[RMDB]
RNA sequence: GGGAACGACUCGAGUAGAGUCGAAAACUUGGUGCCGUGUGCAUUUUGGACACUCAGCCCACCUUGCUCUCUAGUACUUGUAAGCCUUUUCCUUUCAAGAUGCCUGCAGAGGUGUACCAUGGAGAAGGGGAGGUGGCGACUUUUGCCUUUUAGGCAAACGUCGUAAUCCAUUCGUGGAUUACGACGUAAAAGAAACAACAACAACAAC
Reactivity to DMS in 0.01 (KOAc 150mM, MgCl2 10mM, bicine 150mM(pH8.5), 24C), signal-to-noise 2, nucleotides 027 to 156: c060u010u010g020g000u000g020c000c070g020u010g040u020g020c040a170u000u000u000u000g000g010a150c050a080c030u010c070a110g030c030c060c010a060c030c000u000u000g010c000u000c020u000c100u010a070g010u000a060c030u000u010g000u000a030a140g030c010c060u000u010u000u000c040c090u000u000u010c040a070a220g000a070u010g000c020c000u000g000c120a090g010a120g030g030u020g020u000a050c040c050a100u020g020g010a180g000a050a040g010g010g010g010a080g010g040u010g010g010c030g020a110c060u000u000u000u000g030c010c000u000u000u010u000a050g060g030c020a020a030
Reactivity to 2A3 in 0.01 (KOAc 150mM, MgCl2 10mM, bicine 150mM(pH8.5), 24C), signal-to-noise 5, nucleotides 027 to 156: c020u020u050g000g010u040g030c050c040g140u120g060u110g070c050a090u100u060u070u180g060g020a040c020a030c070u110c050a050g020c010c010c000a010c010c010u040u080g070c010u010c000u000c020u100a050g080u070a140c030u080u080g070u150a050a070g020c020c020u080u060u090u100c040c030u020u090u050c020a040a030g010a120u070g010c000c020u080g030c100a060g030a050g230g010u050g020u050a130c040c050a090u110g050g030a060g030a090a050g030g020g020g000a010g000g000u020g000g000c030g070a130c030u050u020u020u010g000c000c000u040u250u090u300a060g000g000c000a010a000